[RMDB]
RNA sequence: GGGAACGACUCGAGUAGAGUCGAAAAGGGUCCCUCCCAUGAUACAUGGGGAUUAUGGGAACUACAAUUCAAGGUGAGAUUUAGGUGUGGACACAGAGCCAAACCAUAUCAGUUGCCCAGGCUGGUACUGAACUGCUAGGCUUCAGCAAUCCUCCUGGCCUGCAUCCGAUUUCGAUCGGAUGCAGGCAAAAGAAACAACAACAACAAC
Reactivity to 2A3 in 0.01 (KOAc 150mM, MgCl2 10mM, bicine 150mM(pH8.5), 24C), signal-to-noise 2, nucleotides 027 to 156: g140g000g030u010c000c000c000u030c060c000c000a030u030g070a090u180a160c080a070u080g020g050g000g060a020u160u160a040u130g010g010g010a040a020c010u200a030c010a060a140u100u180c110a070a010g010g040u070g080a110g000a070u070u070u100a090g050g010u000g000u010g050g000a020c070a030c110a230g050a020g100c040c000a040a000a000c030c000a040u030a000u050c020a000g030u010u040g020c000c000c000a000g060g000c020u020g000g000u060a060c000u010g020a100a000c010u000g050c030u090a050g120g000c000u030u030c030a030g000c050a010a050u000c020c000u080c030c040u030g000

Description: An RNA of 207 nucleotides, treated with 2A3 and read out base by base. It was measured as part of the RMDB library OK3TST. For 2A3, 774 sequencing reads were counted. Conditions: 150 mM KOAc, 10 mM MgCl2 and 150 mM bicine (pH 8.5), 24 C.